[RMDB]
RNA sequence: GGGAACGACUCGAGUAGAGUCGAAAACAAGAUCGGUGGAUAGCAGCCCUAUCAAUAUCUAGGAGAACUGGGCUAUGUUUAGAAGAUUAGGUAGUCUCUAAACAGAACAAUUUACCUGCUGAACAAAAAAAUCCAAUGGCGUUCGCGCCAUUGGAAAGUAAUAUAUAUUCUUCGGAAUAUAUAUUACAAAAGAAACAACAACAACAAC
Reactivity to 2A3 in 0.01 (KOAc 150mM, MgCl2 10mM, bicine 150mM(pH8.5), 24C), signal-to-noise 2, nucleotides 027 to 156: c030a000a070g070a160u080c030g050g010u010g000g070a060u060a100g110c070a010g000c020c000c020u030a050u080c030a080a100u090a080u300c130u200a110g030g070a110g040a120a100c080u100g010g000g000c000u030a050u000g010u000u000u000a020g000a200a030g000a040u010u040a020g030g010u020a020g010u000c010u020c000u010a020a020a010c020a010g010a010a010c010a060a030u040u020u050a040c010c000u010g020c050u080g050a060a030c070a000a080a010a030a040a000a040u030c000c000a000a000u000g000g010c000g010u020u040c180g000c010g040c040c000a000u000u000g000g000a010a000a000